Structure probing data (DMS and 2A3) for a 177-nucleotide construct. Reactivities are given for positions 27 through 126. For DMS, 3,274 sequencing reads were counted. For 2A3, 1,321 sequencing reads were counted. DMS adducts were read by reverse transcription with MarathonRT.
RNA sequence: GGGAACGACUCGAGUAGAGUCGAAAAAGAGUGCUUGGAAGGGGUUCUCAGACAGAGAUAGAUAUCUCAUUUUCAAGUAUUAUGAGAUUAAUGAUUCAUUCAAGCAGAAAGCUCUGGCGAAGGUGGACCAUACAGGAGGAUUCGUCCUCCUGUAUGGAAAAGAAACAACAACAACAAC
Reactivity to DMS in 0.01 (KOAc 150mM, MgCl2 10mM, bicine 150mM(pH8.5), 24C), signal-to-noise 3, nucleotides 027 to 126: a060g010a070g000u000g010c040u000u000g000g020a040a090g010g020g020g000u000u000c010u010c020a150g020a110c200a120g010a040g000a080u000a060g010a140u010a060u000c000u000c000a010u000u010u000u000c030a120a130g010u000a010u000u000a020u000g010a040g000a030u000u000a100a080u020g000a080u000u000c040a100u010u000c050a040a050g000c030a120g020a070a070a120g010c020u000c010u000g000g000c050g010a050a060g010g000u010g000g000a220
Reactivity to 2A3 in 0.01 (KOAc 150mM, MgCl2 10mM, bicine 150mM(pH8.5), 24C), signal-to-noise 1, nucleotides 027 to 126: a000g040a000g050u040g020c020u040u010g080g020a040a020g010g010g030g000u070u040c000u020c040a000g010a100c100a020g000a020g000a070u040a090g020a000u090a040u090c000u000c000a040u000u050u020u000c090a120a130g040u050a100u060u020a000u020g000a000g000a030u020u080a080a070u180g040a040u070u030c020a000u050u040c010a040a030g050c020a020g150a070a060a000g020c000u020c040u000g020g000c040g010a000a020g090g050u080g040g000a020